[RMDB]
RNA sequence: GGGAACGACUCGAGUAGAGUCGAAAACGCUUCAGCAAUUUGUUCAUAGAGUGACUGGAGGUAGCCAUCACCUGCGCCGUUGACCAACGACUGGAGACUCGUAAAACCCUCUUCUCCGGCGAUAUCUUUGAAAAAUGAAACCUGAUCCACCUCGCCAGAACGGUAUAAGUUUCGACUUAUACCGUUCAAAAGAAACAACAACAACAAC
Reactivity to 2A3 in 0.01 (KOAc 150mM, MgCl2 10mM, bicine 150mM(pH8.5), 24C), signal-to-noise 4, nucleotides 027 to 156: c040g000c030u050u030c020a000g010c030a060a210u080u080u130g040u080u110c070a100u150a120g120a050g090u070g040a120c030u020g010g020a030g040g020u050a010g080c040c010a030u040c030a020c000c000u010g000c010g000c040c040g040u030u060g040a090c050c030a050a040c090g070a060c020u000g070g010a050g000a030c030u010c150g030u050a020a040a130a190c030c010c010u040c050u090u030c030u030c040c020g000g010c010g020a000u010a030u090c090u060u090u120g070a080a040a020a010a020u090g030a050a010a030c020c020u050g010a020u050c010c010a020c030c040u030c010g070c000c080a040
Reactivity to DMS in 0.01 (KOAc 150mM, MgCl2 10mM, bicine 150mM(pH8.5), 24C), signal-to-noise 1, nucleotides 027 to 156: c030g010c050u000u000c040a090g000c010a070a160u010u000u000g000u000u000c060a170u010a120g000a290g010u000g010a040c050u000g030g010a080g020g000u000a070g040c020c020a070u010c030a080c010c000u010g020c050g030c030c010g040u000u000g000a070c020c030a070a100c020g000a090c020u010g020g010a120g000a040c030u000c030g030u000a040a040a080a110c060c040c010u000c000u000u000c000u000c020c030g010g020c020g010a160u000a060u000c010u010u000u000g000a020a030a050a060a100u010g010a050a050a060c010c000u000g000a100u020c030c020a030c030c010u010c030g030c010c030a190